[RMDB]
RNA sequence: GGGAACGACUCGAGUAGAGUCGAAAAACACCUGCAGUGGUUCAAGCAACAUUAUCUACUUCAAUUUCUGCUGCUGAAAUACUAAGUGCCGGUCUAAUGGAGGGUCAGAUUGUUUCUGUUCUGCUGGCCGCAGGCCAUGAUUCGUCAUGGCCUGCGGAAAAGAAACAACAACAACAAC
Reactivity to DMS in 0.01 (KOAc 150mM, MgCl2 10mM, bicine 150mM(pH8.5), 24C), signal-to-noise 2, nucleotides 027 to 126: a040c230a100c030c000u010g000c040a010g000u030g010g020u040u010c050a100a070g010c120a070a010c040a040u030u050a040u010c080u000a020c040u050u000c100a070a100u000u000u010c040u000g020c020u000g040c000u000g010a140a010a080u020a080c120u020a020a050g000u010g000c050c010g020g010u020c060u000a100a030u010g000g020a040g020g050g000u000c100a000g010a120u020u000g000u000u000u030c000u000g000u010u020c000u000g010c020u000g000g000
Reactivity to 2A3 in 0.01 (KOAc 150mM, MgCl2 10mM, bicine 150mM(pH8.5), 24C), signal-to-noise 5, nucleotides 027 to 126: a010c050a050c010c000u010g000c010a010g010u010g040g040u050u030c060a090a000g050c010a010a050c010a040u080u160a060u150c020u100a080c030u030u030c030a040a110u070u090u020c010u040g020c000u020g010c020u040g060a040a110a080u200a060c050u050a090a010g040u040g060c000c020g000g030u030c050u090a120a040u070g040g000a010g000g020g050u020c050a000g020a120u020u040g000u000u020u020c010u010g030u050u020c010u020g030c010u010g030g000
Structure probing data (DMS and 2A3) for a 177-nucleotide construct. For 2A3, 3,569 sequencing reads were counted. The DMS profile rests on 2,468 reads. It was measured as part of the RMDB library OK1LIB. Values cover nucleotides 27 to 126.